[RMDB]
RNA sequence: GGGAACGACUCGAGUAGAGUCGAAAAAGGACCUAGACCAAACCCCUGGUGUUUUGGUAACAGUUGUAAACAUUGAUUUUUAAUUUGUAUCACUAAAAAAUUUACAGCCAUCAGUGUCUAACGCCGAAAAGUAGUAUGAUUUCGAUCAUACUACUUUAAAAGAAACAACAACAACAAC
Reactivity to 2A3 in 0.01 (KOAc 150mM, MgCl2 10mM, bicine 150mM(pH8.5), 24C), signal-to-noise 3, nucleotides 027 to 126: a000g080g020a030c030c050u040a070g110a130c000c020a100a080a090c040c030c000c100u060g000g060u060g040u040u050u090u080g030g000u010a030a060c030a060g020u050u020g020u050a040a070a040c050a120u040u100g040a070u030u090u050u080u240a160a170u120u140u190g060u020a100u060c000a020c060u200a040a030a080a000a080a140u080u110u020a030c030a000g000c010c000a030u060c070a030g020u000g000u090c010u010a030a010c010g000c020c010g040a030
Reactivity to DMS in 0.01 (KOAc 150mM, MgCl2 10mM, bicine 150mM(pH8.5), 24C), signal-to-noise 5, nucleotides 027 to 126: a150g010g010a100c040c020u010a110g000a090c030c040a040a100a180c050c020c070c150u010g000g020u010g010u000u000u000u000g020g010u000a050a080c150a070g000u000u010g010u000a040a030a040c090a070u000u000g000a020u000u010u010u010u010a060a170u000u000u000g000u000a060u000c040a060c110u030a000a030a060a060a080a080u000u000u000a020c050a050g010c080c050a060u000c090a030g010u000g000u010c030u000a040a070c100g000c030c020g010a090